[RMDB]
RNA sequence: GGGAACGACUCGAGUAGAGUCGAAAAGCAUCUGCCAAACCGCCCGUUUGGAUGGUUGUGCUCUGAGGAAAUACGCACAGAAUGUCAUUUCAUCAGGCCAUAGCUGUCCAAAUUGGUAUAGAGUUUGAUAGUUACUGCACUUCGGUGCAGUAACUAUAAAAGAAACAACAACAACAAC
Reactivity to 2A3 in 0.01 (KOAc 150mM, MgCl2 10mM, bicine 150mM(pH8.5), 24C), signal-to-noise 4, nucleotides 027 to 126: g040c010a060u080c040u120g060c030c000a000a020a010c010c010g010c000c020c010g000u000u000u000g020g000a000u010g010g000u010u010g000u000g010c010u000c000u040g000a000g050g060a010a010a010u120a050c080g050c060a040c060a260g200a170a090u250g020u070c050a030u020u000u000c010a030u000c000a000g000g000c010c000a000u010a000g000c000u000g000u040c000c000a010a000a000u010u020g000g000u040a080u120a090g060a020g020u000u010u010g020
Reactivity to DMS in 0.01 (KOAc 150mM, MgCl2 10mM, bicine 150mM(pH8.5), 24C), signal-to-noise 2, nucleotides 027 to 126: g040c080a030u030c070u000g000c170c020a000a000a040c000c060g000c010c010c020g000u000u020u040g010g000a010u000g010g000u040u000g000u000g010c080u000c000u040g000a050g000g000a000a010a000u000a030c180g050c180a180c200a230g000a100a300u030g000u000c190a020u000u000u000c000a030u000c000a000g030g000c280c010a020u020a000g010c010u000g050u000c010c000a000a020a000u000u000g000g020u040a100u040a090g000a100g000u010u000u000g010